[RMDB]
This 177-nucleotide RNA was probed chemically with 2A3 and DMS.
Source: RMDB library TTRDES, as collected in RNAgym.
The RNA was probed in 150 mM KOAc, 10 mM MgCl2 and 150 mM bicine (pH 8.5) at 24 C.
Reactivities are rounded to 0.1 and cut off at 0 and 3.
For 2A3, 3,839 sequencing reads were counted.
For 2A3 the reverse transcriptase was SuperScript II with manganese.
RNA sequence: GGGAACGACUCGAGUAGAGUCGAAAAGAUAUGGAACCGUGUGUGGGAGCUCUGUGUCGGAAACGACAUGAAAGAGCAUCGAUCACACCGGUUCCUAAGUCAAAUCAAAACCGUUCGCGGUUUUGAAGUCUAUGCGAAAGUUCGCUUUCGCAUAGACAAAAGAAACAACAACAACAAC
Reactivity to 2A3 in 0.01 (KOAc 150mM, MgCl2 10mM, bicine 150mM(pH8.5), 24C), signal-to-noise 3, nucleotides 027 to 126: g010a030u030a020u080g010g000a000a000c010c020g050u060g010u010g000u020g230g100g150a210g010c010u020c020u020g030u020g000u010c000g000g000a010a050a010c000g020a010c010a010u170g300a220a220a070g000a000g000c000a030u230c160g200a300u070c000a020c010a000c010c000g010g000u000u020c000c000u010a000a000g000u010c010a000a000a300u000c000a000a000a000a000c040c000g010u090u090c300g000c040g110g000u000u010u000u040g020a070a040
Reactivity to DMS in 0.01 (KOAc 150mM, MgCl2 10mM, bicine 150mM(pH8.5), 24C), signal-to-noise 2, nucleotides 027 to 126: g010a020u010a150u010g010g000a010a010c000c000g010u020g040u000g030u010g000g030g010a160g010c000u000c010u000g010u000g010u000c000g000g000a050a020a150c000g010a000c000a020u010g010a100a090a030g000a000g030c020a140u010c240g000a130u020c000a010c000a000c020c010g020g020u000u010c000c000u000a010a050g000u010c000a100a140a200u000c000a010a000a000a000c010c000g040u010u010c300g020c010g020g010u010u000u030u020g000a030a100